[RMDB]
RNA sequence: GGGAACGACUCGAGUAGAGUCGAAAAGCUUCUUCAGGAACCAGUUAAAGUCCAUGAAGGGACUUCGUAGUCGAGUAUCAUCGAUCCAUGUAUAGUCAAUCUUAUGUCCUACACCCAACACGUUUUCAGUACUAUUAUGUACACUGGCACAUCGGAGAAACGUCGUGUAAUUCGUUACACGACGUUUAAAAGAAACAACAACAACAAC
Reactivity to 2A3 in 0.01 (KOAc 150mM, MgCl2 10mM, bicine 150mM(pH8.5), 24C), signal-to-noise 5, nucleotides 027 to 156: g010c020u070u030c000u000u060c070a020g060g030a060a090c030c020a020g000u060u140a170a050a000g030u020c020c020a140u090g160a090a070g060g000g020a020c010u060u060c100g070u060a040g040u020c020g020a010g010u110a110u240c100a070u020c060g020a020u040c050c040a070u090g060u040a090u080a120g090u040c050a060a130u030c050u070u170a060u130g060u010c010c010u030a010c030a050c030c030c010a060a040c030a040c100g030u040u050u100u100c030a030g010u040a010c010u010a080u300u050a070u180g010u020a010c060a020c040u020g020g020c090a050c020a090u090c050g040g020a060g050
Reactivity to DMS in 0.01 (KOAc 150mM, MgCl2 10mM, bicine 150mM(pH8.5), 24C), signal-to-noise 3, nucleotides 027 to 156: g050c020u010u010c010u060u010c020a080g030g030a070a060c020c020a140g040u010u000a140a100a040g020u000c020c020a110u000g020a090a150g010g010g010a040c010u000u000c040g030u010a070g030u010c050g010a280g010u000a080u010c030a100u010c040g030a050u000c050c080a100u000g060u000a090u010a070g000u010c040a040a080u010c030u010u010a060u010g020u000c030c000u000a090c040a110c020c010c030a060a110c070a070c070g030u000u000u000u010c040a160g000u000a060c040u000a140u000u000a050u000g010u000a030c050a090c060u000g010g020c080a030c090a080u000c050g000g000a220g000